[RMDB]
RNA sequence: GGGAACGACUCGAGUAGAGUCGAAAAUAUAAUACAUUCUUCAACAGACGCAUGUGCACAAAACUUUAAAAGUUUUGUAUGCACAAACCAUAUAGGUCAGAUAGACAUCAUAAGCAAGAUCAGCCAGGCUACACAUUACGGAUAUAGCUUCGUAAAAUCGAAUGUAGCAAUUCGUUGCUACAUUCGAAAAAGAAACAACAACAACAAC
Reactivity to 2A3 in 0.01 (KOAc 150mM, MgCl2 10mM, bicine 150mM(pH8.5), 24C), signal-to-noise 3, nucleotides 027 to 156: u090a010u030a000a070u060a030c040a070u050u080c040u090u080c080a120a080c030a090g070a060c050g000c050a020u040g000u000g010c010a000c000a010a000a000a000c000u100u210u300a190a210a070a030g010u000u000u010u000g010u010a050u050g000c000a000c000a010a000a030c010c010a060u100a040u110a160g070g020u060c030a010g030a150u150a050g040a020c050a050u120c020a060u100a110a010g040c020a040a030g030a080u100c030a010g070c050c000a010g040g000c010u060a020c040a000c000a110u050u070a010c010g010g020a000u030a000u020a200g040c020u050u030c030g080u040a000a040a080a110
Reactivity to DMS in 0.01 (KOAc 150mM, MgCl2 10mM, bicine 150mM(pH8.5), 24C), signal-to-noise 1, nucleotides 027 to 156: u010a120u040a060a100u020a060c040a140u000u020c040u000u020c060a020a090c090a070g000a130c060g000c040a090u010g040u000g000c000a080c010a020a020a000a020c000u020u000u010a120a200a130a120g010u000u000u000u020g000u000a040u000g010c000a010c080a030a200a160c080c040a140u030a190u000a130g040g020u000c040a150g000a080u000a070g030a100c050a120u010c050a090u020a060a050g000c010a050a070g000a100u000c040a030g000c090c000a100g050g010c030u000a010c010a100c010a130u000u010a050c040g040g000a100u000a070u010a070g030c110u000u020c010g000u000a040a030a090a120